Structure probing data (DMS and 2A3) for a 177-nucleotide construct. For DMS the reverse transcriptase was MarathonRT.
RNA sequence: GGGAACGACUCGAGUAGAGUCGAAAAGACGGAAAAGAUCGAACCUAAGAAAAUCAGGAAUUGUGAGCCGAAUCCUAGGGCUCCUAGGGACGCAUCGUCCGAUGCGAAAUAAACACUAACGUCGAAACACUCCGGACUAUUUCGAUAGUCCGGAGUGAAAAGAAACAACAACAACAAC
Reactivity to DMS in 0.01 (KOAc 150mM, MgCl2 10mM, bicine 150mM(pH8.5), 24C), signal-to-noise 1, nucleotides 027 to 126: g070a120c000g030g010a170a100a100a170g010a050u010c060g000a040a170c000c000u000a090a200g000a080a020a090a190u000c070a000g030g010a040a070u010u000g010u040g010a180g000c050c090g000a110a030u000c010c030u000a030g000g000g020c140u020c050c020u020a000g000g020g000a290c040g000c050a000u000c000g000u000c190c070g000a000u000g000c000g000a000a050a110u020a080a040a070c020a000c040u020a040a150c110g000u030c000g020a160a060a100
Reactivity to 2A3 in 0.01 (KOAc 150mM, MgCl2 10mM, bicine 150mM(pH8.5), 24C), signal-to-noise 3, nucleotides 027 to 126: g010a000c000g040g030a000a010a090a000g090a020u030c000g030a030a120c000c000u040a070a000g050a040a140a030a120u100c100a060g150g250a120a200u160u100g070u120g070a000g020c000c000g040a150a000u060c010c010u030a050g050g020g010c020u000c000c000u000a000g000g020g070a040c010g020c020a030u080c060g280u220c190c100g040a040u030g000c020g020a020a140a070u240a020a120a000c040a000c080u060a060a000c040g050u030c040g080a000a000a000
The RNA was probed in 150 mM KOAc, 10 mM MgCl2 and 150 mM bicine (pH 8.5) at 24 C. Reactivities are given for positions 27 through 126. For 2A3, 1,340 sequencing reads were counted.